[RMDB]
RNA sequence: GGGAACGACUCGAGUAGAGUCGAAAAGCAUCUGUCCAGAAGUUCCUGGGCGAAGAGGCGCAGGAGCCGGAGCAUCAGGAAGGCGCAACCGCUCCGGCCGAACCGACCGACAGCGAGCACAUGACCGCAGUUGAAAUAGUUUCGACUAUUUCAACUGAAAAGAAACAACAACAACAAC
Reactivity to 2A3 in 0.01 (KOAc 150mM, MgCl2 10mM, bicine 150mM(pH8.5), 24C), signal-to-noise 5, nucleotides 027 to 126: g010c010a040u030c020u070g020u000c000c000a020g030a160a020g140u110u070c010c000u020g030g060g000c040g030a100a040g050a040g110g000c060g000c060a030g050g050a030g010c010c010g000g010a000g000c020a040u160c080a030g130g060a110a060g080g000c070g000c070a050a030c020c030g000c000u000c010c000g000g000c000c010g010a020a020c010c000g030a020c000c020g010a020c010a020g040c030g070a030g020c030a020c010a140u120g040a040c010c040g030
Reactivity to DMS in 0.01 (KOAc 150mM, MgCl2 10mM, bicine 150mM(pH8.5), 24C), signal-to-noise 7, nucleotides 027 to 126: g000c040a070u000c030u000g020u000c020c030a050g010a220a200g010u010u000c080c010u000g010g010g000c010g010a070a060g010a130g000g010c030g000c090a090g010g010a120g020c000c020g000g000a070g020c020a130u000c180a170g010g000a110a070g000g010c040g010c050a120a140c070c060g010c010u010c010c000g010g010c010c050g000a040a090c080c050g000a080c070c120g000a060c070a060g000c050g000a050g010c020a050c070a070u000g000a140c040c060g020